[RMDB]
RNA sequence: GGGAACGACUCGAGUAGAGUCGAAAAGGCGACCUGAGCGAACAUCGACGGCCAUAAGUAGCGGGCCUCGGCUCCUUCGUGCCCGGUCCAGGCCGCGGCACUCAGAUGCUCGGCCGCGGUGUCGCCGCGGCUGAUAACUUUUCGAAGUUAUCAGCCGAAAAGAAACAACAACAACAAC
Reactivity to DMS in 0.01 (KOAc 150mM, MgCl2 10mM, bicine 150mM(pH8.5), 24C), signal-to-noise 9, nucleotides 027 to 126: g010g020c080g010a110c050c050u000g000a150g020c020g010a080a040c040a020u000c010g010a150c080g010g000c010c010a110u010a090a070g010u000a040g020c100g020g000g000c010c020u000c260g020g010c030u000c030c070u000u000c130g010u000g010c010c000c020g000g010u010c020c160a180g000g010c000c010g020c170g000g000c010a010c020u000c150a080g000a150u000g010c020u000c120g000g010c010c010g020c020g000g010u000g010u000c010g010c010c060g020
Reactivity to 2A3 in 0.01 (KOAc 150mM, MgCl2 10mM, bicine 150mM(pH8.5), 24C), signal-to-noise 9, nucleotides 027 to 126: g080g020c060g070a070c020c050u080g040a050g040c020g030a080a030c010a020u030c020g300a300c020g200g000c010c010a090u100a250a040g150u160a020g060c080g020g020g020c020c020u040c080g080g000c010u040c020c010u100u110c040g020u020g000c000c000c010g010g010u020c050c040a110g160g000c000c010g020c090g000g000c010a010c020u070c020a090g050a150u140g010c010u030c050g010g020c000c010g010c000g000g010u020g000u000c000g010c010c010g010